[RMDB]
RNA sequence: GGGAACGACUCGAGUAGAGUCGAAAAUUGACUCGCAACAAUUAUAGAUACCAUUAAUCACUGAUUCCUUUUUCGAUGCCGGACAAUAGCACAAUUGUUUAGCUUUGGACUCUAUGUAUUCAGAAUUAAUAGAUAUAUCUUUUAAUACAGAUUGCACUCACCUCUUAGUGUUCGCACUAAGAGGUGAAAAAGAAACAACAACAACAAC
Reactivity to 2A3 in 0.01 (KOAc 150mM, MgCl2 10mM, bicine 150mM(pH8.5), 24C), signal-to-noise 2, nucleotides 027 to 156: u060u020g000a020c000u020c090g020c020a010a030c010a030a040u070u090a020u060a110g020a030u030a030c070c010a010u000u060a040a030u070c100a050c100u020g010a040u040u090c000c000u020u110u000u040u050c020g030a060u080g020c010c040g030g010a010c020a050a030u050a060g180c160a020c010a180a060u020u010g030u020u010u050a010g010c000u010u000u040g010g020a020c010u000c020u150a120u120g040u040a060u000u060c000a000g010a020a000u090u030a030a030u110a170g000a000u110a040u060a070u250c080u140u300u030u100a090a030u090a030c010a010g090a250u000u050g000c000a000c000